RNA sequence: GGGAACGACUCGAGUAGAGUCGAAAACACCCCAGGGGUGAAGACAGGAUGGGUGGGGUUCUCAGCUCCACUGGACACCAAACAGAAGCUGUAAGUGCAAGGCUAGUGCCCAUGUCGAGGGCUGGGCUCCCUCAGAACCUUUCGAGGUUCUGAGGGAAAAAGAAACAACAACAACAAC
Reactivity to DMS in 0.01 (KOAc 150mM, MgCl2 10mM, bicine 150mM(pH8.5), 24C), signal-to-noise 1, nucleotides 027 to 126: c090a180c120c030c000c070a190g020g010g010g010u000g020a050a130g000a140c060a030g010g000a110u010g010g010g010u000g000g000g000g010u000u000c050u000c080a060g000c000u050c010c050a030c050u000g000g000a060c070a110c000c170a040a110a080c090a090g030a070a100g010c060u000g000u030a100a110g010u020g020c000a090a170g000g000c070u000a060g000u010g000c000c010c000a030u010g020u000c100g010a110g010g000g000c000u000g010g000g000c170